[RMDB]
RNA sequence: GGGAACGACUCGAGUAGAGUCGAAAAGAUAUGGAGCAAGAGGCGAGGAUCACACCGCUGGUCGGAAACGACCAUGUGUGGGAGCCUCAACCUCCUAAGUCAAAACCGAUUCGUUCGCGAAUCGGAACAAUGGAUACCGGUUCGCCGGUAUCCAUUGAAAAGAAACAACAACAACAAC
Reactivity to 2A3 in 0.01 (KOAc 150mM, MgCl2 10mM, bicine 150mM(pH8.5), 24C), signal-to-noise 2, nucleotides 027 to 126: g020a010u050a020u160g000g000a000g000c050a140a070g030a000g020g020c010g070a300g030g030a000u010c010a000c020a000c000c010g000c030u000g010g000u000c020g000g060a100a080a070c010g010a010c000c010a000u070g000u010g000u010g000g000g000a000g000c000c000u010c000a000a010c000c000u000c000c000u030a120a030g080u050c050a010a030a100a190c000c000g000a010u010u010c010g070u030u060c300g000c020g160a000a010u010c000g010g000a010a020
Reactivity to DMS in 0.01 (KOAc 150mM, MgCl2 10mM, bicine 150mM(pH8.5), 24C), signal-to-noise 3, nucleotides 027 to 126: g000a020u010a300u000g000g010a010g000c050a080a300g010a010g040g030c010g010a100g020g000a050u010c010a000c000a010c000c010g000c020u000g010g010u000c010g000g000a100a110a220c020g010a010c010c000a020u000g000u010g020u000g000g000g000a050g020c020c000u020c000a000a120c300c000u000c010c010u000a030a120g020u000c030a120a050a100a130c010c000g000a030u000u000c020g000u000u020c210g010c020g000a000a000u000c000g000g010a070a040
Structure probing data (2A3 and DMS) for a 177-nucleotide construct. For DMS the reverse transcriptase was MarathonRT. It was measured as part of the RMDB library TTRDEL. For 2A3, 5,163 sequencing reads were counted.